Chemical mapping of a 207-nucleotide RNA with DMS and 2A3. For DMS the reverse transcriptase was MarathonRT. The 2A3 profile rests on 850 reads. The RNA was probed in 150 mM KOAc, 10 mM MgCl2 and 150 mM bicine (pH 8.5) at 24 C.
RNA sequence: GGGAACGACUCGAGUAGAGUCGAAAAGGCUGCUGCCGGAGCCGAUACCGGAAUACGAGACCUUAUGUGCGGUCGAAUGCACUGAAGUACGAAAGUACGAAGAGGUCAGACCGAGGACCGAGACUCGAUAUGCUCGUUAGAUGGAGCUUUACAUCAAAUUAUGGAUGACGUUCGCGUCAUCCAUAAUAAAAGAAACAACAACAACAAC
Reactivity to DMS in 0.01 (KOAc 150mM, MgCl2 10mM, bicine 150mM(pH8.5), 24C), signal-to-noise 1, nucleotides 027 to 156: g020g010c030u000g030c030u000g000c010c050g000g000a060g060c010c050g000a160u000a060c030c020g000g000a000a100u020a110c040g040a130g050a070c000c010u010u010a100u010g020u010g000c000g020g000u010c230g000a070a090u030g000c040a040c010u000g000a060a290g000u000a000c120g010a300a180a190g060u020a060c020g000a120a210g000a110g010g060u000c000a090g010a100c020c000g010a190g020g000a090c070c020g050a170g010a150c030u010c020g000a200u000a090u000g000c040u000c020g030u000u000a110g000a120u010g000g020a070g000c060u000u030u000a130c090a130u010c040a090a150
Reactivity to 2A3 in 0.01 (KOAc 150mM, MgCl2 10mM, bicine 150mM(pH8.5), 24C), signal-to-noise 2, nucleotides 027 to 156: g010g010c020u030g020c030u040g030c010c000g010g000a030g000c000c000g120a040u050a090c010c020g000g060a080a000u110a080c030g010a020g010a120c000c010u020u100a020u180g010u030g020c010g000g000u100c020g030a000a040u100g000c050a000c000u070g080a080a000g060u000a000c000g060a180a040a000g000u010a000c000g000a010a000g060a000g020g000u010c010a020g020a010c000c080g030a050g010g050a000c040c000g020a000g000a060c010u020c070g010a050u070a050u190g000c010u000c020g120u080u110a050g000a130u000g060g000a030g030c000u060u100u040a050c050a030u070c040a070a060